[RMDB]
RNA sequence: GGGAACGACUCGAGUAGAGUCGAAAAACCAUGUGUUCCACCGGCGUCACUGUAGGCUUCCUUCCAUGCCUACGGUUAGAUGCUUGAAUUUCUUUGGUGGCAUUCUGUCGACACAUGGAAGAUUGAUCCGCAAGUGUAGAUUCGUCUACACUUGCGGAAAAGAAACAACAACAACAAC
Reactivity to 2A3 in 0.01 (KOAc 150mM, MgCl2 10mM, bicine 150mM(pH8.5), 24C), signal-to-noise 4, nucleotides 027 to 126: a000c010c000a000u000g010u010g000u020u040c010c000a010c030c010g040g000c000g000u000c000a000c000u010g010u000a000g000g000c020u070u130c030c020u180u200c090c030a120u180g000c000c010u000a000c000g030g010u060u040a070g000a000u000g000c000u010u050g020a050a070u140u190u150c220u140u060u240g000g010u000g000g000c000a030u180u110c100u140g030u070c080g030a000c010a000c000a000u000g020g010a010a000g020a080u100u220g050a030u010